[RMDB]
RNA sequence: GGGAACGACUCGAGUAGAGUCGAAAACUAUUUCAGACUGUGGGCAUUAAUCCAGAUUCAAGGUGCAUGGUUAGCGUCUGAAAUAAUGAACAUGCCAGUAACACUGAAAAAUACAGGAGGUCAGUUACCUCAUCCAUCCGUUCGCGGAUGGAUGAGGAAAAGAAACAACAACAACAAC
Reactivity to 2A3 in 0.01 (KOAc 150mM, MgCl2 10mM, bicine 150mM(pH8.5), 24C), signal-to-noise 1, nucleotides 027 to 126: c000u010a010u000u040u030c000a040g010a050c030u120g000u100g110g050g020c010a050u060u030a070a010u090c030c010a030g090a200u120u160c120a100a050g230g000u000g020c110a130u030g250g090u180u120a030g030c010g000u000c010u000g000a000a000a000u080a010a080u060g030a050a010c050a030u060g040c000c020a020g030u080a040a020c100a010c070u080g080a030a030a040a130a090u130a030c010a020g020g050a000g010g130u070c000a010g040u080u060a080
Reactivity to DMS in 0.01 (KOAc 150mM, MgCl2 10mM, bicine 150mM(pH8.5), 24C), signal-to-noise 1, nucleotides 027 to 126: c010u000a040u000u000u000c040a030g010a000c030u000g100u000g030g020g020c100a070u000u000a100a110u000c000c010a090g010a120u010u010c170a040a080g100g030u000g030c050a070u010g000g030u020u000a130g050c080g000u000c000u040g030a070a020a000u010a030a130u000g010a070a040c110a100u000g000c040c080a070g050u010a040a140c060a110c030u000g000a000a070a070a050a180u010a060c160a090g060g000a090g000g010u000c070a040g010u000u010a190
Structure probing data (2A3 and DMS) for a 177-nucleotide construct. Reactivities are given for positions 27 through 126. For DMS the reverse transcriptase was MarathonRT. The 2A3 profile rests on 738 reads.